[RMDB]
RNA sequence: GGGAACGACUCGAGUAGAGUCGAAAAUGCCGUUCCGUCCCGCAACGCUGGACAUGGCCAAGCACUAUUGGUUCGGAGCCGGGAUCAAACAGGGUGUGAACGGUUUGGGGCAUCCACCGGUCGCUACCAUACCGCUUAUCUUCGGAUAAGCGGUAUGAAAAGAAACAACAACAACAAC
Reactivity to DMS in 0.01 (KOAc 150mM, MgCl2 10mM, bicine 150mM(pH8.5), 24C), signal-to-noise 5, nucleotides 027 to 126: u000g010c020c000g020u010u000c010c050g000u000c010c010c010g000c100a090a090c150g010c020u010g000g010a050c060a110u010g000g000c010c040a110a120g010c150a120c130u000a100u000u010g010g010u000u000c030g020g010a080g010c040c010g010g000g010a070u000c130a040a080a130c170a090g010g010g010u000g020u010g000a030a050c030g010g010u000u000u000g010g000g000g000c060a070u010c010c010a040c030c020g000g000u000c030g010c030u020a100c090
Reactivity to 2A3 in 0.01 (KOAc 150mM, MgCl2 10mM, bicine 150mM(pH8.5), 24C), signal-to-noise 4, nucleotides 027 to 126: u070g030c010c010g000u010u020c030c020g030u020c020c000c000g040c050a070a080c080g020c110u000g010g020a030c030a160u180g050g000c020c010a040a000g050c040a050c240u140a120u110u060g020g000u270u290c040g050g030a080g020c000c010g030g020g040a080u120c110a040a120a050c070a100g020g000g070u060g050u110g050a020a010c020g000g000u010u020u110g040g000g000g010c020a110u060c030c010a010c000c030g010g040u020c010g030c040u050a050c010